[RMDB]
RNA sequence: GGGAACGACUCGAGUAGAGUCGAAAAAACAAAAAUAACUGUAAACAACGCAGAUUACGCUCCAGCUUACGCUAAAGCUGCGUGAGUUAAUCUCCUUUUGGAGCUGGACUGAUUAGAAUUUCUAGCGUUUUAAUCGCUCCAUAACCUUAAGCUAGACGCCUCAUUUCAUGUUCGCAUGAAAUGAGGCAAAAGAAACAACAACAACAAC
Reactivity to 2A3 in 0.01 (KOAc 150mM, MgCl2 10mM, bicine 150mM(pH8.5), 24C), signal-to-noise 1, nucleotides 027 to 156: a000a000c170a040a110a010a030a000u240a070a040c020u020g030u120a110a090a170c070a090a040c240g000c000a020g020a080u060u160a080c030g000c010u000c000c000a020g000c000u000u000a000c010g000c000u070a150a120a250g140c130u090g010c010g000u000g000a000g000u010u040a070a010u000c060u010c050c030u080u050u070u100g000g000a000g000c000u020g020g010a020c010u010g000a000u000u000a020g000a010a000u000u070u070c000u000a010g000c000g000u010u000u000u000a020a020u000c010g020c070u000c020c030a140u230a140a190c020c030u080u040a090a000g000c000u000a000g000a020c070
Overview
Conditions: 150 mM KOAc, 10 mM MgCl2 and 150 mM bicine (pH 8.5), 24 C. Structure probing data (2A3) for a 207-nucleotide construct. It was measured as part of the RMDB library ARCHII. 2A3 adducts were read by reverse transcription with SuperScript II with manganese.